RNA sequence: GGGAACGACUCGAGUAGAGUCGAAAAUGACUGUUGGGCCCUAGCAUCCCCAACAGUCUAAUGAUGUAGUGGUGUGGAGUACGCGAGAGCGUACUCAGCAUCCGAGAGGAUGCGAUUCCGACCCACAUUAUUGCAUCUAACGGUCGGUCGCUAGGGGAAAUACGCUGAGUUUCGACUCAGCGUAUUUAAAAGAAACAACAACAACAAC
Reactivity to 2A3 in 0.01 (KOAc 150mM, MgCl2 10mM, bicine 150mM(pH8.5), 24C), signal-to-noise 1, nucleotides 027 to 156: u150g000a000c000u000g000u000u000g000g010g000c000c000c000u010a010g000c030a180u120c030c020c000c000a000a000c010a000g020u000c010u010a010a010u110g010a010u000g000u030a010g010u000g000g000u010g010u010g020g010a030g030u000a000c000g000c010g000a000g010a020g060c020g000u020a010c000u020c000a000g000c000a000u000c000c010g010a040g000a010g100g010a000u000g040c000g000a010u150u110c110c040g030a060c030c010c000a000c000a020u060u040a020u000u010g000c000a000u010c070u090a060a020c030g160g100u130c070g030g030u030c010g040c010u000a000g000g000g000g020
Reactivity to DMS in 0.01 (KOAc 150mM, MgCl2 10mM, bicine 150mM(pH8.5), 24C), signal-to-noise 1, nucleotides 027 to 156: u000g010a050c040u000g020u010u000g000g010g040c040c050c030u000a110g000c060a130u000c110c000c000c010a010a010c010a010g000u000c000u000a030a070u010g030a050u000g020u000a040g020u010g010g010u000g000u030g000g030a110g060u010a010c010g020c000g000a270g000a300g010c010g000u000a000c000u000c030a090g000c000a000u000c000c010g010a300g000a300g040g000a020u000g030c020g030a290u020u000c020c060g000a180c010c010c000a060c030a080u010u000a020u000u020g020c060a070u000c010u000a170a090c090g010g040u000c050g050g010u000c020g010c020u000a050g010g010g050g010
Source: RMDB library OK3TST, as collected in RNAgym.
This 207-nucleotide RNA was probed chemically with 2A3 and DMS.
Values are in units of 0.01, from 0 to 300, in steps of 10.
As a SHAPE reagent, 2A3 marks flexible, mostly unpaired nucleotides at the ribose 2'-OH.